[RMDB]
RNA sequence: GGGAACGACUCGAGUAGAGUCGAAAAGAAAUUCCCGAUCGGCGGUAAAGUCCGCGAGCCGAACGAAAAAGGUUUGGCGGGAACCGGUGAGAUUCCGGUACCGACAGUAUAGUCUGGAUGGAAGAAGGUAGCCUCCUCUCGUUCGCGAGAGGAGGAAGUAUACGUUAAAGUUCGCUUUAACGUAUACAAAAGAAACAACAACAACAAC
Reactivity to DMS in 0.01 (KOAc 150mM, MgCl2 10mM, bicine 150mM(pH8.5), 24C), signal-to-noise 3, nucleotides 027 to 156: g010a050a090a190u000u000c010c000c000g000a080u000c000g030g000c020g000g010u000a080a180a100g000u010c000c020g010c020g010a300g020c030c010g020a050a300c020g030a070a150a160a200a210g010g040u000u000u010g020g000c020g010g020g000a140a020c000c000g020g010u000g010a240g010a300u000u000c010c010g020g020u000a010c010c000g010a040c070a080g000u010a120u010a100g010u000c050u000g020g030a080u010g000g000a070a090g010a120a060g010g010u000a160g000c000c010u000c000c000u000c000u000c000g040u000u000c250g030c000g000a030g000a020g000g000a010g000g000a000a030
Reactivity to 2A3 in 0.01 (KOAc 150mM, MgCl2 10mM, bicine 150mM(pH8.5), 24C), signal-to-noise 2, nucleotides 027 to 156: g010a000a100a000u060u000c000c020c010g030a220u080c010g020g000c010g030g000u000a010a010a000g010u000c000c000g000c000g010a000g000c020c000g010a010a010c010g090a250a110a070a020a020g160g010u010u000u000g030g000c040g020g020g000a010a000c000c000g000g000u000g000a000g000a000u000u000c000c000g020g010u000a000c000c000g010a000c000a000g010u020a050u070a270g060u000c070u070g020g100a090u070g050g030a110a170g010a070a030g180g010u150a090g060c020c000u020c020c000u010c020u000c000g040u040u060c230g000c020g100a010g000a000g000g080a000g010g000a000a000

Overview:
Chemical mapping of a 207-nucleotide RNA with DMS and 2A3. The data come from the RNA Mapping Database (RMDB), library M2RFPK. Values are in units of 0.01, from 0 to 300, in steps of 10. For 2A3, 1,335 sequencing reads were counted. DMS adducts were read by reverse transcription with MarathonRT. For 2A3 the reverse transcriptase was SuperScript II with manganese. Reactivities are given for positions 27 through 156.